RNA sequence: GGGAACGACUCGAGUAGAGUCGAAAAGAUAUGGACACGGAGACGCGACAACUAUGAAGUCGGAAACGAUGGAGUUGUCGACCCGUUUAAGUGUCCUAAGUCAAAGCGAAAGGUUCGCCUUUCGCAACCAUUGAGAGGGGUUCGCCCCUCUCAAUGGAAAAGAAACAACAACAACAAC
Reactivity to 2A3 in 0.01 (KOAc 150mM, MgCl2 10mM, bicine 150mM(pH8.5), 24C), signal-to-noise 2, nucleotides 027 to 126: g020a020u060a020u160g000g010a000c000a010c030g000g060a050g000a020c020g000c000g050a020c000a000a010c020u050a200u300g080a100a020g020u000c010g020g000a050a050a000c030g010a010u040g020g090a000g020u020u010g020u000c020g000a020c020c020c000g020u000u000u040a040a010g000u000g000u010c000c000u010a080a010g000u020c030a100a090a000g000c010g030a000a000a000g100g000u090u180c300g210c010c000u010u020u000c000g000c000a000a000
Reactivity to DMS in 0.01 (KOAc 150mM, MgCl2 10mM, bicine 150mM(pH8.5), 24C), signal-to-noise 2, nucleotides 027 to 126: g000a030u000a300u000g000g000a010c000a000c010g000g020a210g000a000c010g010c000g010a050c000a010a000c030u000a190u020g000a080a290g000u000c010g000g010a150a080a150c010g000a040u000g010g010a010g020u000u010g000u000c000g030a040c180c220c080g000u010u010u010a130a160g000u010g000u000c000c010u010a010a120g030u000c030a040a060a100g000c010g000a000a000a010g030g020u000u030c300g010c000c000u010u000u000c000g020c000a050a030
Overview
Chemical mapping of a 177-nucleotide RNA with 2A3 and DMS. For DMS, 1,762 sequencing reads were counted. DMS adducts were read by reverse transcription with MarathonRT. The reactions ran in a buffer of 150 mM KOAc, 10 mM MgCl2 and 150 mM bicine (pH 8.5), at 24 C. For 2A3 the reverse transcriptase was SuperScript II with manganese.